[RMDB]
RNA sequence: GGGAACGACUCGAGUAGAGUCGAAAAGAUAUGGAGAUACUAGGGAGUCGGUCGGAAACGAUUUCGACGCGAAACCUACUAUCUCCUAAGUCAAAGUAGGGGUGAGGGUUCGCCCUCACCCCUACAACAGUGAGAUUGUCUUCGGACAAUCUCACUGAAAAGAAACAACAACAACAAC
Reactivity to DMS in 0.01 (KOAc 150mM, MgCl2 10mM, bicine 150mM(pH8.5), 24C), signal-to-noise 1, nucleotides 027 to 126: g000a060u010a300u000g010g000a010g040a030u010a010c050u000a030g020g000g020a110g010u010c000g000g010u000c000g000g010a010a040a150c300g000a110u000u000u000c010g000a000c000g000c030g000a000a100a090c020c020u000a010c090u000a000u000c000u000c000c000u010a020a020g000u000c030a150a150a150g010u000a040g010g000g010g030u000g020a060g000g000g020u000u000c290g000c030c020c000u040c000a000c010c000c000c000u000a000c000a030a070